The record gives the reactivity of an RNA of 177 nucleotides to DMS and 2A3. DMS adducts were read by reverse transcription with MarathonRT. The data come from the RNA Mapping Database (RMDB), libraries RFM100 and RFMREP.
[RMDB]
RNA sequence: GGGAACGACUCGAGUAGAGUCGAAAAUGCAGCGGCCGAGGCGUUUGUGCUGGACGUGGCCUGAAUAAGGCUGUAACCCAACGUUCCGCCUUUCGCCAGAAGAUGGAUGCUUUGCGCAAUGUCUGAGUUUUAAUUCCAUAUUCGUAUGGAAUUAAAAAAAAGAAACAACAACAACAAC
Reactivity to DMS in 0.01 (KOAc 150mM, MgCl2 10mM, bicine 150mM(pH8.5), 24C), signal-to-noise 9, nucleotides 027 to 126: u030g020c020a060g020c030g010g010c020c020g010a150g010g000c000g010u000u000u000g010u030g050c000u000g010g010a020c010g010u000g010g010c000c000u000g000a130a070u020a130a070g010g000c010u000g010u020a100a170c040c030c040a190a050c020g000u000u000c000c080g010c010c010u000u000u000c010g020c000c010a110g010a090a090g010a100u020g010g010a120u010g010c030u000u010u010g020c040g010c110a070a070u020g000u000c030u000g000a140g010
Reactivity to 2A3 in 0.01 (KOAc 150mM, MgCl2 10mM, bicine 150mM(pH8.5), 24C), signal-to-noise 9, nucleotides 027 to 126: u170g000c010a010g010c010g060g010c010c020g050a060g010g000c020g010u010u010u010g120u150g010c020u040g000g000a000c000g020u050g010g000c000c000u010g030a040a060u300a100a010g000g000c000u020g100u130a080a080c000c020c000a010a000c000g010u030u010c000c010g000c000c000u000u000u000c000g000c000c010a020g070a070a020g080a060u220g030g010a020u060g020c000u090u100u130g020c060g000c050a050a080u110g030u040c030u050g090a090g080